[RMDB]
RNA sequence: GGGAACGACUCGAGUAGAGUCGAAAAAAAUCUCAUAAACUCCUUUCAGCCUUCUGACUCCUGGAGUAAUGAAGGCUGCUUUUUUCGUUACACCCUUCCCCGGCAGCGCCGGUGGCAGUGUUCAGCCGCUGGUGUUUUCAUUCGUGAAAACACCAGCAAAAGAAACAACAACAACAAC
Reactivity to 2A3 in 0.01 (KOAc 150mM, MgCl2 10mM, bicine 150mM(pH8.5), 24C), signal-to-noise 1, nucleotides 027 to 126: a000a000a020u070c070u000c020a090u140a050a240a060c020u000c000c130u090u130u110c000a000g000c000c040u000u000c040u040g110a060c030u000c020c130u150g180g000a020g000u070a010a040u090g000a000a000g000g000c000u020g000c000u020u050u010u000u000u050c020g010u000u010a100c020a070c010c010c000u000u040c020c000c000c010g070g000c110a230g040c170g000c050c000g040g000u120g120g000c000a030g000u000g040u000u150c010a020g040c020c060